[RMDB]
This 207-nucleotide RNA was probed chemically with 2A3. The data come from the RNA Mapping Database (RMDB), library OK3TST.
RNA sequence: GGGAACGACUCGAGUAGAGUCGAAAAGAUUAUGUGGGAGAGGCGCCCUUUCGUUUCCUCGGAUAAUUAAUUGCCAGUCGCUGGCUUUAGCGAUCUUGAUGUCAUCUGUAGCGAUGACUAUGCUACAUUAAGGUAUGAUCCGGAUACCACCGGUAAAGAUUUUAUCGGUGUUCGCACCGAUAAAAUCAAAAGAAACAACAACAACAAC
Reactivity to 2A3 in 0.01 (KOAc 150mM, MgCl2 10mM, bicine 150mM(pH8.5), 24C), signal-to-noise 1, nucleotides 027 to 156: g000a010u110u110a010u200g190u090g040g000g000a220g000a000g020g000c000g030c000c020c000u080u020u070c060g000u050u040u000c030c000u050c030g000g010a050u040a110a050u120u190a040a170u160u160g000c000c000a000g050u040c040g040c090u060g000g000c000u060u030u070a000g000c000g020a020u060c020u060u090g110a100u190g030u030c000a040u000c060u110g020u120a010g090c020g060a040u040g000a000c020u050a040u160g040c040u040a000c000a140u210u040a070a080g060g000u120a060u110g110a050u120c000c000g000g000a030u050a050c000c000a030c030c080g000g000u010a020a020a000